Chemical mapping of a 177-nucleotide RNA with 2A3 and DMS. Conditions: 150 mM KOAc, 10 mM MgCl2 and 150 mM bicine (pH 8.5), 24 C. Reactivities are given for positions 27 through 126. It was measured as part of the RMDB library OK2TST.
RNA sequence: GGGAACGACUCGAGUAGAGUCGAAAACGGUGAAAUGUAAUAGCGAAUCGAUGUGCUUCAUCACGCAGCUGCUGAAUAAGGUACAACCCUUGAGAAUUUCGUGGAAGAAUCAAUGGGUCUUCUUCGAGGUAUUUAGGCUGUUCGCAGCCUAAAUACCAAAAGAAACAACAACAACAAC
Reactivity to 2A3 in 0.01 (KOAc 150mM, MgCl2 10mM, bicine 150mM(pH8.5), 24C), signal-to-noise 2, nucleotides 027 to 126: c070g000g010u050g070a100a010a040u140g020u180a090a100u060a140g020c010g100a050a050u060c060g060a050u070g000u020g090c000u160u080c010a060u040c000a030c050g050c000a020g020c020u090g020c020u000g050a080a060u100a110a020g050g020u040a010c030a030a040c020c030c010u040u050g080a040g090a150a100u100u110u040c010g000u090g040g030a020a000g020a000a090u070c050a090a120u170g220g020g050u010c010u020u010c000u020u070c020g100a070
Reactivity to DMS in 0.01 (KOAc 150mM, MgCl2 10mM, bicine 150mM(pH8.5), 24C), signal-to-noise 2, nucleotides 027 to 126: c120g000g020u010g000a070a090a050u000g000u010a070a080u010a040g020c040g000a110a060u010c090g000a080u010g030u000g010c080u000u000c070a060u010c040a130c120g000c090a060g000c130u010g000c040u010g000a150a040u000a040a030g000g000u000a030c090a060a130c060c030c020u000u010g000a090g020a080a080u010u020u000c010g020u000g000g010a000a020g000a080a020u000c040a070a120u020g010g010g030u000c070u010u000c000u000u010c030g000a120